[RMDB]
RNA sequence: GGGAACGACUCGAGUAGAGUCGAAAACUAUGGGAAUCCCCGGUUUCCCCUCACGUCCAGCCCCUCCCCGGUCCGAGAGAAGGGGGACUCCGGAACACUUUGCAUGCUGGGGACGAAGCCGCCCCCGACUCACAAUACUGUUCGCAGUAUUGUGAGUAAAAGAAACAACAACAACAAC
Reactivity to DMS in 0.01 (KOAc 150mM, MgCl2 10mM, bicine 150mM(pH8.5), 24C), signal-to-noise 1, nucleotides 027 to 126: c100u000a080u010g010g010g020a220a150u000c080c020c050c030g010g010u000u000u000c010c010c020c080u000c060a050c090g000u000c030c060a070g000c020c000c000c010u000c000c000c010c040g010g010u000c000c040g010a160g000a090g000a040a130g000g000g000g020g010a300c000u000c010c030g030g000a110a050c070a080c130u000u000u000g000c120a080u010g030c110u010g000g020g000g020a020c090g010a050a070g010c010c090g020c020c010c010c030c010g010
An RNA of 177 nucleotides, treated with DMS and read out base by base. The reactions ran in a buffer of 150 mM KOAc, 10 mM MgCl2 and 150 mM bicine (pH 8.5), at 24 C. It was measured as part of the RMDB library VIROID. The DMS profile rests on 672 reads.